An RNA of 177 nucleotides, treated with 2A3 and DMS and read out base by base.
The 2A3 profile rests on 749 reads.
The data come from the RNA Mapping Database (RMDB), library OK2TST.
RNA sequence: GGGAACGACUCGAGUAGAGUCGAAAACUCAAGGCACUGGAUAAUUCUUGAGAAUUGAAGUGGACGAAUCAACAUGAGCGAACAAAGUACAGCCGUGCAAGUUAAAAUUCUCGACAAGGAAUAUCAGCGGAAGAGGAAUGUUCGCAUUCCUCUUCCGAAAAGAAACAACAACAACAAC
Reactivity to 2A3 in 0.01 (KOAc 150mM, MgCl2 10mM, bicine 150mM(pH8.5), 24C), signal-to-noise 1, nucleotides 027 to 126: c000u000c010a000a010g070g010c050a010c130u060g070g050a060u000a110a150u150u000c040u070u160g050a090g010a000a020u040u030g060a070a000g040u080g000g050a070c030g010a030a030u050c020a030a110c000a060u140g070a000g040c010g040a040a020c060a090a190a010g040u060a110c040a000g010c000c000g010u050g020c020a080a000g010u090u090a040a130a020a150u090u030c010u000c040g070a050c030a090a020g080g010a020a020u070a040u090c010a010g100
Reactivity to DMS in 0.01 (KOAc 150mM, MgCl2 10mM, bicine 150mM(pH8.5), 24C), signal-to-noise 2, nucleotides 027 to 126: c000u000c030a060a110g060g000c080a080c100u000g010g020a060u000a070a070u010u000c010u010u000g020a080g000a080a050u000u000g080a120a090g050u010g050g000a120c020g010a080a160u000c100a080a020c080a050u010g020a220g000c030g000a080a080c090a080a030a080g000u010a060c110a190g020c100c020g010u000g000c040a030a100g000u000u010a030a080a030a120u000u010c010u010c030g030a100c210a060a040g010g000a030a060u000a050u010c100a100g010